[RMDB]
RNA sequence: GGGAACGACUCGAGUAGAGUCGAAAAUAGCUGACGUUCGCGUCAGCUAAAAGCACCAAAACCUCCUGGCGGUGCGGCGCCGGCCCCGCCGGGAACGCCGCCAACUCGAUGGGUUCGCCCAUCGAAAGGAGUUAUAAAAUUUCGAUUUUAUAACUCCAAAAGAAACAACAACAACAAC
Reactivity to DMS in 0.01 (KOAc 150mM, MgCl2 10mM, bicine 150mM(pH8.5), 24C), signal-to-noise 2, nucleotides 027 to 126: u000a000g000c000u000g010a020c000g020u000u010c220g050c000g030u000c000a010g000c000u000a000a010a080a170g010c140a190c030c030a080a070a100a260c070c030u010c020c030u000g010g000c020g020g030u000g010c040g010g010c040g010c040c020g010g000c040c060c290c120g010c000c010g000g010g010a070a120c040g010c010c010g010c010c070a040a100c120u000c000g000a000u000g000g010g010u010u010c140g020c000c010c000a010u000c010g010a000a070a100
Reactivity to 2A3 in 0.01 (KOAc 150mM, MgCl2 10mM, bicine 150mM(pH8.5), 24C), signal-to-noise 2, nucleotides 027 to 126: u020a000g010c010u000g000a000c010g020u020u030c300g040c020g110u010c000a000g000c000u000a000a010a000a010g000c010a080c030c010a030a040a090a200c030c040u070c000c020u010g020g000c010g000g030u030g010c030g050g040c080g050c040c050g020g000c030c060c050c130g000c000c010g000g000g000a010a000c000g010c000c010g020c010c000a030a020c030u000c010g000a000u000g010g010g030u040u050c090g080c000c000c000a000u000c000g000a000a000a000
Chemical mapping of a 177-nucleotide RNA with DMS and 2A3. The reactions ran in a buffer of 150 mM KOAc, 10 mM MgCl2 and 150 mM bicine (pH 8.5), at 24 C. Values are in units of 0.01, from 0 to 300, in steps of 10. DMS (dimethyl sulfate) methylates the pairing face of unpaired adenines and cytosines.